[RMDB]
RNA sequence: GGGAACGACUCGAGUAGAGUCGAAAACUUUCCAGUUUGGAAAAGGAGCAGAGAGCUGUCCAUCUGGAUUGAUGGAAGAAAAGAGAACCUCAUCCAUGCCUGGAGAACAUCUAGAAAACCUUCAGCCAGCCUCCAGUGCUGUCGAGAGACCACCUUAUCCGUAAAUGGGAUUCGUCCCAUUUACGGAAAAAGAAACAACAACAACAAC
Reactivity to 2A3 in 0.01 (KOAc 150mM, MgCl2 10mM, bicine 150mM(pH8.5), 24C), signal-to-noise 4, nucleotides 027 to 156: c020u060u020u000c010c000a040g050u070u070u100g040g020a050a100a100a110g070g010a050g010c070a040g070a040g020a030g140c060u080g040u020c010c010a030u000c030u080g100g080a170u070u180g040a050u060g020g020a040a040g050a060a110a030a010g090a010g010a040a030c000c000u020c020a090u030c030c000a030u070g010c000c000u010g040g010a030g020a040a040c040a100u080c040u090a040g090a050a110a070a100c010c030u090u060c050a030g020c060c000a020g010c010c020u050c050c020a040g030u060g150c010u010g030u040c030g000a020g010a010g020a070c040c000a030c010c050u050u090a050
Reactivity to DMS in 0.01 (KOAc 150mM, MgCl2 10mM, bicine 150mM(pH8.5), 24C), signal-to-noise 1, nucleotides 027 to 156: c060u010u010u010c010c000a120g030u010u000u000g000g030a110a060a070a100g020g010a070g040c100a140g030a110g020a130g050c040u010g000u000c020c010a000u000c030u000g000g000a100u000u010g020a040u000g000g010a060a040g000a060a040a090a130g030a180g010a020a130c030c030u000c030a240u010c050c010a140u000g010c060c060u000g010g000a090g010a060a090c020a070u000c040u020a100g000a040a060a120a140c030c010u000u010c020a120g010c000c000a090g000c050c050u010c030c040a070g000u010g000c010u000g000u020c000g000a060g000a190g010a100c030c020a110c130c010u010u000a230